Source: RMDB library M2PK50, as collected in RNAgym.
The record gives the reactivity of an RNA of 177 nucleotides to 2A3 and DMS.
For 2A3, 13,264 sequencing reads were counted.
Reactivities are given for positions 27 through 126.
For 2A3 the reverse transcriptase was SuperScript II with manganese.
Conditions: 150 mM KOAc, 10 mM MgCl2 and 150 mM bicine (pH 8.5), 24 C.

[RMDB]
RNA sequence: GGGAACGACUCGAGUAGAGUCGAAAACACACAAGGUUCGCCUUGUGUGCAAGAAAAGACGAAUACUACCGUAGAAGUAUUCAGGUCACAUAACUACGGAAAUGGCGUUCUGCUUCGGCAGAACGAAGUAGUACGCUAAGUUCGCUUAGCGUACUACAAAAGAAACAACAACAACAAC
Reactivity to 2A3 in 0.01 (KOAc 150mM, MgCl2 10mM, bicine 150mM(pH8.5), 24C), signal-to-noise 7, nucleotides 027 to 126: c010a000c000a000c000a010a010g040g010u040u070c140g140c050c000u010u000g000u010g000u000g000c020a060a050g120a060a120a000a020g090a020c050g010a010a000u010a010c000u070a290c010c010g010u010a010g010a100a000g010u010a020u010u020c050a020g090g100u090c050a040c020a270u180a240a100c020u010a010c010g000g100a020a050a070u200g190g000c010g000u010u000c000u010g010c000u030u040c190g120g000c010a000g000a000a000c000g000a000a010
Reactivity to DMS in 0.01 (KOAc 150mM, MgCl2 10mM, bicine 150mM(pH8.5), 24C), signal-to-noise 4, nucleotides 027 to 126: c010a000c000a010c000a010a000g000g010u010u000c230g020c010c000u000u000g000u000g030u000g000c120a070a080g000a090a070a110a150g010a090c090g000a020a020u000a010c000u000a120c020c020g000u000a010g010a170a020g000u000a010u000u010c010a100g020g020u010c060a070c150a080u010a100a080c010u010a010c000g000g000a210a090a100u010g000g010c010g000u000u000c000u000g010c000u000u010c170g010g010c010a000g020a010a010c010g000a010a070